RNA sequence: GGGAACGACUCGAGUAGAGUCGAAAAGGCGUUGCCGGAGAUGGUGCUGCGCGCCGACCAGCUCGAGCACGUUGGCCGACGGACUCGUCACCACCGUAAUCCUCGCCUGGUCAAGGUCAGUGUGCUCCACUCGUUACGUCUUCGGACGUAACGAGUGAAAAGAAACAACAACAACAAC
Reactivity to DMS in 0.01 (KOAc 150mM, MgCl2 10mM, bicine 150mM(pH8.5), 24C), signal-to-noise 2, nucleotides 027 to 126: g030g000c010g030u000u000g050c070c080g000g030a050g000a060u020g040g000u020g010c000u020g010c060g030c050g000c000c050g020a180c020c020a070g030c060u010c120g000a000g010c050a000c030g000u000u000g020g030c030c000g000a090c090g000g010a100c020u010c100g030u000c000a100c010c050a000c000c030g020u010a130a200u000c080c010u000c060g060c220c020u020g010g010u000c060a150a180g000g000u000c040a000g000u000g040u040g000c000u000c000
Reactivity to 2A3 in 0.01 (KOAc 150mM, MgCl2 10mM, bicine 150mM(pH8.5), 24C), signal-to-noise 3, nucleotides 027 to 126: g030g000c070g030u050u250g010c050c040g020g010a110g020a160u170g050g040u080g050c020u020g010c000g000c030g010c000c020g040a080c000c000a020g060c040u070c060g000a000g000c000a010c020g020u010u010g010g000c010c030g010a050c080g010g020a040c000u020c050g060u080c040a040c030c030a010c010c020g070u110a050a070u090c010c010u060c040g040c000c020u020g050g000u080c080a090a080g000g000u000c000a020g030u000g030u010g060c000u010c000

Structure probing data (DMS and 2A3) for a 177-nucleotide construct. 2A3 adducts were read by reverse transcription with SuperScript II with manganese. Conditions: 150 mM KOAc, 10 mM MgCl2 and 150 mM bicine (pH 8.5), 24 C. The 2A3 profile rests on 2,447 reads. It was measured as part of the RMDB library OK1LIB.